This 177-nucleotide RNA was probed chemically with DMS and 2A3. For 2A3, 6,333 sequencing reads were counted. High DMS reactivity at an A or C suggests that its Watson-Crick edge is free. 2A3 adducts were read by reverse transcription with SuperScript II with manganese.
RNA sequence: GGGAACGACUCGAGUAGAGUCGAAAACGUUAAUGACAUUUGUAUGUUUGAGAAUAAAACCACUUUGCCUACUAAUAUAGCUUUUGAACUCUAUGCUAAGCGUGCUGUACGCUCGCAUCCCGAUUUCGUAGGAUACAAUGUUCGCAUUGUAUCCUACAAAAGAAACAACAACAACAAC
Reactivity to DMS in 0.01 (KOAc 150mM, MgCl2 10mM, bicine 150mM(pH8.5), 24C), signal-to-noise 5, nucleotides 027 to 126: c090g000u000u010a020a070u000g010a060c030a050u010u010u030g020u010a050u010g010u010u000u000g000a150g000a110a070u000a060a040a040a080c050c110a060c050u000u000u000g020c020c020u000a070c060u000a050a070u010a130u000a080g020c050u000u000u000u000g010a070a070c060u010c050u000a050u010g020c050u000a070a070g010c050g020u000g020c120u010g020u010a050c100g010c020u000c090g000c040a120u000c010c010c000g010a160u000u000u010c140
Reactivity to 2A3 in 0.01 (KOAc 150mM, MgCl2 10mM, bicine 150mM(pH8.5), 24C), signal-to-noise 6, nucleotides 027 to 126: c010g020u050u110a110a040u140g050a030c030a070u080u110u170g140u100a100u050g040u010u090u110g080a070g040a070a060u110a100a080a020a000c020c010a020c020u040u030u050g000c010c000u010a040c010u020a070a090u110a040u040a120g020c010u000u040u000u060g020a030a030c010u000c020u040a030u060g020c020u020a040a010g020c010g040u020g030c050u110g060u070a010c030g030c010u010c000g020c010a020u020c000c000c000g050a060u070u070u050c040